[RMDB]
RNA sequence: GGGAACGACUCGAGUAGAGUCGAAAAGGAACUAUGUUCAGGCAUGAAGCCUCCACGUGCGUGCGAAAGCACCCGGAAACGGCUGAGCAUAGUUCCGAGCUGAAGGAGGCACGGCUCAAAAUAAAAAGGGUAUCCUCCUAUUCGUAGGAGGAUACCCAAAAGAAACAACAACAACAAC
Reactivity to 2A3 in 0.01 (KOAc 150mM, MgCl2 10mM, bicine 150mM(pH8.5), 24C), signal-to-noise 2, nucleotides 027 to 126: g010g000a000a000c000u000a020u020g000u010u010c020a000g000g000c000a010u010g070a110a010g000c000c000u030c000c010a070c020g010u020g000c020g010u000g050c000g050a090a010a020g020c000a000c000c000c040g010g050a020a130a010c020g000g000c010u010g010a000g000c000a000u030a000g000u010u010c000c000g030a000g060c010u030g010a130a070g000g010a000g000g000c000a030c050g000g000c000u010c010a070a080a000a000u300a060a040a000a010a020

The record gives the reactivity of an RNA of 177 nucleotides to 2A3. The reactions ran in a buffer of 150 mM KOAc, 10 mM MgCl2 and 150 mM bicine (pH 8.5), at 24 C. Source: RMDB library OK1LIB, as collected in RNAgym.